Notes: Structure probing data (2A3) for a 177-nucleotide construct. The 2A3 profile rests on 616 reads. The RNA was probed in 150 mM KOAc, 10 mM MgCl2 and 150 mM bicine (pH 8.5) at 24 C.
[RMDB]
RNA sequence: GGGAACGACUCGAGUAGAGUCGAAAAUAGAAGCAUGCUCUCCAUAUGCUCCUGUAUCAGAAAGUGCUUUUAUAUCUAUUGCCUUUAUUAUGCCAUCAUUUGUAGCACCUAGUCUAACUUUUAAUCUGAUGGUCACUCAGUUCGCUGAGUGACCAUCAAAAGAAACAACAACAACAAC
Reactivity to 2A3 in 0.01 (KOAc 150mM, MgCl2 10mM, bicine 150mM(pH8.5), 24C), signal-to-noise 2, nucleotides 027 to 126: u090a000g050a070a000g020c000a000u010g040c000u110c000u000c050c040a020u070a070u140g100c060u110c010c000u120g080u060a170u050c000a080g080a000a040a050g050u150g100c000u030u000u020u030a230u030a000u000c020u040a180u020u070g060c020c000u000u090u090a170u100u030a030u170g000c000c000a000u060c030a030u020u000u150g020u020a010g000c010a060c010c030u030a000g010u010c000u080a070a040c030u040u140u010u200a090a090u090c040u010
Source information
High 2A3 reactivity points to a flexible backbone, as in loops and unpaired stretches. The data come from the RNA Mapping Database (RMDB), library OK1LIB.